Chemical mapping of a 177-nucleotide RNA with DMS and 2A3.
RNA sequence: GGGAACGACUCGAGUAGAGUCGAAAAGAUAUGGAGUGUUGCUUUUGACGACUGAAGGGUCGGAAACGACCCGUAGGUCGAUAAGCACCACUCCUAAGUCAAAGGCAAGAAGUUCGCUUCUUGCCAACUUAGCUUAGACCUUCGGGUCUAAGCUAAGAAAAGAAACAACAACAACAAC
Reactivity to DMS in 0.01 (KOAc 150mM, MgCl2 10mM, bicine 150mM(pH8.5), 24C), signal-to-noise 2, nucleotides 027 to 126: g000a070u000a300u000g000g000a060g010u000g010u010u000g000c000u000u000u000u010g030a180c090g030a010c000u000g010a140a300g000g000g000u010c010g000g030a030a130a140c010g000a000c000c000c010g000u000a200g000g030u000c050g070a080u000a010a010g020c010a010c060c000a000c010u000c010c000u000a000a060g000u010c040a120a120a090g010g000c000a010a010g010a050a030g000u000u050c270g000c000u000u000c000u000u000g000c000c010a010a000
Reactivity to 2A3 in 0.01 (KOAc 150mM, MgCl2 10mM, bicine 150mM(pH8.5), 24C), signal-to-noise 1, nucleotides 027 to 126: g030a030u080a050u140g000g000a010g000u000g000u000u010g000c020u110u110u160u130g290a220c050g000a000c010u000g090a190a020g020g000g000u010c000g000g010a110a040a040c010g000a010c000c000c000g000u010a000g000g010u000c000g000a000u010a010a010g010c000a000c000c000a020c000u000c000c020u020a020a000g000u020c050a010a070a090g000g010c010a010a000g000a010a000g050u070u300c300g080c190u000u000c010u000u000g000c000c000a000a000
Background
2A3 adducts were read by reverse transcription with SuperScript II with manganese. Reactivities are given for positions 27 through 126. For DMS the reverse transcriptase was MarathonRT.